RNA sequence: GGGAACGACUCGAGUAGAGUCGAAAAGGACGCCCGGCCGCGGUACGAGGGCGAGUGGGAGAUGCUACGCCAGAGUAUGAUGAAACACGGCCUGCGCAACAGCCAGUUUGUCGCGCUGAUGCCCACCCUCCCCAAGGGAGUUCGCUCCCUUGGGGAGAAAAGAAACAACAACAACAAC
Reactivity to DMS in 0.01 (KOAc 150mM, MgCl2 10mM, bicine 150mM(pH8.5), 24C), signal-to-noise 2, nucleotides 027 to 126: g000g000a070c110g020c050c150c080g020g040c000c000g000c040g010g020u000a020c030g010a170g000g010g010c000g000a050g050u050g010g000g020a030g000a080u020g000c040u000a070c080g000c000c030a050g000a300g010u030a020u000g000a110u050g000a130a020a110c000a150c010g000g050c040c010u000g000c140g020c090a070a060c010a040g000c010c120a160g030u100u000u010g020u000c110g020c040g090c030u000g000a070u040g000c010c000c040a080c240c110
Reactivity to 2A3 in 0.01 (KOAc 150mM, MgCl2 10mM, bicine 150mM(pH8.5), 24C), signal-to-noise 4, nucleotides 027 to 126: g110g010a030c060g050c000c000c000g070g000c020c010g000c040g050g000u050a010c000g000a090g050g000g030c020g000a000g000u090g030g160g010a180g010a100u170g050c000u060a160c030g000c020c020a000g010a010g060u060a040u100g160a130u180g070a120a180a000c080a010c010g000g000c010c000u010g000c000g010c020a040a110c010a020g040c030c040a030g080u070u130u060g090u130c020g000c010g000c040u010g010a090u150g030c000c040c000a020c020c010